The record gives the reactivity of an RNA of 177 nucleotides to 2A3 and DMS. Reactivities are given for positions 27 through 126. It was measured as part of the RMDB libraries RFM100 and RFMREP.

RNA sequence: GGGAACGACUCGAGUAGAGUCGAAAACGCGAUAAGGGAUGCCUGCCUCGCAAUGAGGCAGGUCGCAGUGACUCGGAGGCUCCGACUGUCUAAUAACAACAUAGGUGACCGCAAAUCCGCAAGGACGCACCUAACGUGAAUUCGUUCACGUUAGGUGAAAAGAAACAACAACAACAAC
Reactivity to 2A3 in 0.01 (KOAc 150mM, MgCl2 10mM, bicine 150mM(pH8.5), 24C), signal-to-noise 6, nucleotides 027 to 126: c050g020c010g010a040u080a170a100g010g020g030a060u120g000c000c000u010g000c000c000u000c000g080c170a100a250u300g000a000g000g000c000a000g000g000u010c010g010c000a020g050u030g080a040c010u010c070g030g020a020g020g040c030u010c030c000g050a060c060u050g020u020c040u030a040a130u120a180a070c060a030a000c000a040u060a030g030g010u020g040a140c010c000g040c030a050a070a050u010c010c000g030c040a020a030g050g000a020c030g000
Reactivity to DMS in 0.01 (KOAc 150mM, MgCl2 10mM, bicine 150mM(pH8.5), 24C), signal-to-noise 6, nucleotides 027 to 126: c080g020c040g010a140u010a080a070g000g020g000a060u020g010c010c000u000g000c000c000u000c010g000c280a120a120u020g000a010g000g020c000a010g000g010u000c070g020c050a070g020u010g010a090c030u000c020g010g010a150g000g000c040u010c020c020g010a100c090u020g020u000c020u000a060a070u030a100a100c110a040a060c110a030u010a080g000g000u000g010a090c020c020g000c120a030a070a100u000c030c010g000c130a070a120g000g010a100c200g000

The RNA was probed in 150 mM KOAc, 10 mM MgCl2 and 150 mM bicine (pH 8.5) at 24 C.